[RMDB]
RNA sequence: GGGAACGACUCGAGUAGAGUCGAAAACGGUAUUGGUCAAGGCUAUACCGACAGCGCACCUUCAAAAGGGCGCUUAGUCCCCGGCCAAGCGCCGAAAUAUGAAUAGACACCGCUGGGCUGGUAGGGCAAAACAUGGCGAUCUUCGGAUCGCCAUGAAGAUUUCGUGUACGUUCGCGUACACGAAAUCAAAAGAAACAACAACAACAAC
Reactivity to 2A3 in 0.01 (KOAc 150mM, MgCl2 10mM, bicine 150mM(pH8.5), 24C), signal-to-noise 1, nucleotides 027 to 156: c010g000g000u010a020u100u210g050g010u030c060a180a160g140g050c020u000a000u000a010c000c010g000a020c070a000g000c000g050c030a260c050c050u090u130c170a160a190a050a010g000g000g000c000g000c010u000u000a010g000u000c000c000c000c000g010g000c000c000a050a000g030c020g000c090c050g070a050a030a000u250a040u070g200a200a050u100a090g060a020c050a000c030c010g000c000u000g020g040g000c010u000g010g000u030a050g040g010g020c050a030a120a010a060c010a000u000g010g000c000g000a000u010c000u000u020c170g050g000a000u000c010g030c000c000a000u020g000a000a000